[RMDB]
RNA sequence: GGGAACGACUCGAGUAGAGUCGAAAAGCACUGCCUGCUUAUGGUGGCAACCCAUGUCAAUACCAUAGAAGCCGCGUUGGGUCGCGGAAGUUCUGUGAAACCGUAUCAUAGGGUAUGGGCAACGCAGCUAUAAUAUUUUUUUCGAAAAAUAUUAUAGAAAAGAAACAACAACAACAAC
Reactivity to DMS in 0.01 (KOAc 150mM, MgCl2 10mM, bicine 150mM(pH8.5), 24C), signal-to-noise 5, nucleotides 027 to 126: g000c130a130c100u010g000c020c020u000g010c030u010u000a020u020g010g020u000g000g000c010a050a090c030c010c010a110u030g000u010c090a100a080u040a080c050c000a020u000a020g000a210a100g010c010c010g020c000g010u010u000g010g010g010u010c010g000c010g010g000a010a060g000u000u000c000u000g010u000g000a080a110a100c040c040g010u010a030u020c020a130u030a130g030g010g000u000a010u000g000g000g000c080a080a140c100g000c010a030g000
Reactivity to 2A3 in 0.01 (KOAc 150mM, MgCl2 10mM, bicine 150mM(pH8.5), 24C), signal-to-noise 4, nucleotides 027 to 126: g040c020a020c100u030g010c010c010u050g020c010u100u060a040u070g040g010u010g030g010c020a040a080c000c010c000a010u030g040u010c030a040a050u070a110c020c010a000u010a020g060a030a010g030c000c000g000c020g010u020u060g130g050g200u090c000g000c000g000g000a000a010g010u000u000c000u000g010u000g030a080a030a020c010c000g010u020a030u040c020a080u110a040g090g000g010u030a000u010g000g000g000c000a040a000c020g000c010a000g000